RNA sequence: GGGAACGACUCGAGUAGAGUCGAAAAGUCAAGAUGUGUAGGAUAGGUGCGAGGCUUUGAAGUGUGGACGCCAGUCUGCAUGGAGCCGACCUUGAAAUACCACCCUUUAAUGGAAAAACAAAGUGAAGGGUAAACCAGUAUUCGUACUGGUUUACCCAAAAGAAACAACAACAACAAC
Reactivity to DMS in 0.01 (KOAc 150mM, MgCl2 10mM, bicine 150mM(pH8.5), 24C), signal-to-noise 1, nucleotides 027 to 126: g000u000c080a030a030g000a040u000g000u010g080u000a000g000g000a200u010a020g010g000u010g000c110g050a120g010g030c000u000u040u020g000a140a070g000u000g010u000g010g000a040c010g030c220c130a090g000u000c000u000g000c020a030u000g000g000a040g030c000c000g000a020c010c010u000u010g000a050a170a130u000a080c030c030a050c090c040c010u000u050u000a110a070u030g000g010a100a070a060a030a060c190a010a130a050g030u000g000a090a170